[RMDB]
Structure probing data (2A3 and DMS) for a 177-nucleotide construct. Values are in units of 0.01, from 0 to 300, in steps of 10. For 2A3, 3,157 sequencing reads were counted. The reactions ran in a buffer of 150 mM KOAc, 10 mM MgCl2 and 150 mM bicine (pH 8.5), at 24 C. Values cover nucleotides 27 to 126. DMS adducts were read by reverse transcription with MarathonRT.
RNA sequence: GGGAACGACUCGAGUAGAGUCGAAAAGAUAUGGAAGAUCGAUAAGAGUAUGUCGGAAACGACAUGACUCUUUUGACGAUCCUUCCUAAGUCAAACGAAUACCAGGGGUUCGCCCCUGGUAUUCGAACUAACCCUAAUCCUUCGGGAUUAGGGUUAGAAAAGAAACAACAACAACAAC
Reactivity to 2A3 in 0.01 (KOAc 150mM, MgCl2 10mM, bicine 150mM(pH8.5), 24C), signal-to-noise 1, nucleotides 027 to 126: g010a050u030a030u080g010g000a000a020g010a010u000c000g030a020u070a280a030g020a000g010u000a000u000g000u010c000g010g000a040a040a030c010g000a000c010a000u040g110a040c000u050c000u030u040u010u020g030a020c020g000a000u000c100c110u000u000c000c000u030a090a010g040u010c060a110a060a050c020g010a000a010u000a000c000c010a000g000g010g010g010u030u120c280g280c000c000c000c020u000g000g000u000a000u010u000c000g000a000a000
Reactivity to DMS in 0.01 (KOAc 150mM, MgCl2 10mM, bicine 150mM(pH8.5), 24C), signal-to-noise 4, nucleotides 027 to 126: g000a050u000a300u000g000g000a020a030g000a030u000c000g010a160u010a020a020g000a020g010u000a030u000g000u000c010g010g000a090a090a160c010g020a010c010a000u000g000a020c000u000c000u000u000u010u010g020a220c080g000a020u000c170c060u000u000c000c000u000a050a110g010u000c030a100a110a270c020g000a010a010u000a010c000c010a020g000g000g000g010u000u000c260g000c000c000c010c000u000g000g020u000a000u010u000c000g010a040a160